RNA sequence: GGGAACGACUCGAGUAGAGUCGAAAAGAACUCGCACGUGCGACCGAUCGUCGCGUCAAGGGCAACAUCGGCUGGGCGUUCUGUUACAACGGGAUCGCGAUCCCGCUUGCCGUAACCGGACUGCUCAGAGGUAAAUGCCUUUCGAGGCAUUUACCUCAAAAGAAACAACAACAACAAC
Reactivity to 2A3 in 0.01 (KOAc 150mM, MgCl2 10mM, bicine 150mM(pH8.5), 24C), signal-to-noise 1, nucleotides 027 to 126: g010a040a080c000u010c030g080c020a060c040g140u190g080c030g010a050c020c030g090a170u120c030g020u030c030g000c020g030u040c050a020a130g020g080g000c000a020a010c000a040u070c030g160g000c000u030g020g010g000c000g000u000u000c000u020g000u030u010a000c000a060a000c000g000g020g000a000u020c040g000c110g140a010u000c000c040c000g040c090u050u110g090c000c030g000u000a010a000c010c040g000g000a010c040u220g050c020u010c030a020
Reactivity to DMS in 0.01 (KOAc 150mM, MgCl2 10mM, bicine 150mM(pH8.5), 24C), signal-to-noise 2, nucleotides 027 to 126: g010a100a190c060u010c030g020c120a160c230g000u010g010c010g000a070c050c050g030a060u030c110g060u000c030g030c010g050u000c160a120a090g050g010g010c060a040a080c120a020u000c060g020g000c000u010g010g000g020c100g000u000u000c010u000g020u000u000a030c010a110a070c000g010g000g010a030u010c070g030c300g020a160u000c000c010c000g040c040u010u000g020c250c100g000u000a000a000c020c030g030g000a010c000u000g160c000u000c010a040
This 177-nucleotide RNA was probed chemically with 2A3 and DMS.
DMS adducts were read by reverse transcription with MarathonRT.
Conditions: 150 mM KOAc, 10 mM MgCl2 and 150 mM bicine (pH 8.5), 24 C.
The data come from the RNA Mapping Database (RMDB), library OK2TRN.
Values cover nucleotides 27 to 126.
2A3 adducts were read by reverse transcription with SuperScript II with manganese.